[RMDB]
RNA sequence: GGGAACGACUCGAGUAGAGUCGAAAACGUCAGAAGACGAAGUCGGUCCAUCUGCGGUAAGAGACCGACAUAGAGUUCGAAGCAGAACGAACAACCGCAGAUACACGAUUGGAGUGUGAAUGAGAGAAAUUAGUCCCGUAUUCGUACGGGACUAAUUAAAAGAAACAACAACAACAAC
Reactivity to 2A3 in 0.01 (KOAc 150mM, MgCl2 10mM, bicine 150mM(pH8.5), 24C), signal-to-noise 4, nucleotides 027 to 126: c030g020u020c010a130g060a300a020g010a180c060g030a090a010g000u000c010g010g000u000c010c010a020u000c010u010g030c010g000g030u060a100a010g040a030g000a100c010c000g010a000c000a000u050a000g100a010g030u030u020c020g020a110a020g140c120a050g050a070a050c020g020a000a000c020a000a000c000c000g000c000a000g000a010u030a020c040a000c010g130a080u070u230g100g030a100g040u030g020u020g060a010a110u230g030a080g020a020g080a030
Reactivity to DMS in 0.01 (KOAc 150mM, MgCl2 10mM, bicine 150mM(pH8.5), 24C), signal-to-noise 5, nucleotides 027 to 126: c040g030u010c040a100g030a110a080g000a020c010g040a180a100g000u000c000g000g000u000c000c090a050u000c010u010g020c030g010g020u000a110a070g010a180g010a020c000c000g020a010c020a020u030a040g000a150g000u020u000c000g020a110a100g020c210a150g000a090a090c030g010a020a040c050a120a060c000c000g000c030a010g010a040u010a090c080a070c040g000a110u010u020g000g000a190g000u000g000u020g000a090a070u010g000a130g020a120g010a090
The record gives the reactivity of an RNA of 177 nucleotides to 2A3 and DMS. 2A3 adducts were read by reverse transcription with SuperScript II with manganese. Source: RMDB library OK1LIB, as collected in RNAgym. For DMS, 8,886 sequencing reads were counted. The reactions ran in a buffer of 150 mM KOAc, 10 mM MgCl2 and 150 mM bicine (pH 8.5), at 24 C. For DMS the reverse transcriptase was MarathonRT.